[RMDB]
RNA sequence: GGGAACGACUCGAGUAGAGUCGAAAAUAUACAUUAGAAGUCAGCACAGCUCCCGACUCGCGGUGUGCGAUGCUACGUCGCGCGAGCGACGUAGCUACUGUGCAGACGGCUAGCAAAAGCUAGCCAAAAUCAUACGCAUCUUCGGAUGCGUAUGAUUAAAAGAAACAACAACAACAAC
Reactivity to 2A3 in 0.01 (KOAc 150mM, MgCl2 10mM, bicine 150mM(pH8.5), 24C), signal-to-noise 2, nucleotides 027 to 126: u220a000u010a040c070a070u040u140a150g110a300a020g020u030c000a030g000c010a020c000a000g000c010u020c000c000c060g030a010c030u000c030g050c040g110g210u260g070u080g080c010g000a000u060g000c000u000a010c000g000u000c000g000c000g000c030g020a030g000c000g000a000c000g000u000a010g000c000u000a000c010u000g000u000g000c000a000g010a050c020g010g000c010u000a000g000c000a010a170a260a300g000c000u000a000g000c000c000a040a070
Reactivity to DMS in 0.01 (KOAc 150mM, MgCl2 10mM, bicine 150mM(pH8.5), 24C), signal-to-noise 1, nucleotides 027 to 126: u070a090u080a120c090a110u020u010a210g030a160a100g060u000c000a110g010c010a020c020a010g000c160u040c000c040c000g020a160c300u030c010g000c000g000g020u010g000u080g020c000g000a020u000g020c050u000a000c060g000u000c080g000c030g010c300g000a300g000c000g010a030c060g000u000a000g000c000u010a050c040u020g000u010g010c000a110g000a020c000g010g000c000u000a000g000c000a130a030a100a090g010c000u010a000g000c020c020a010a010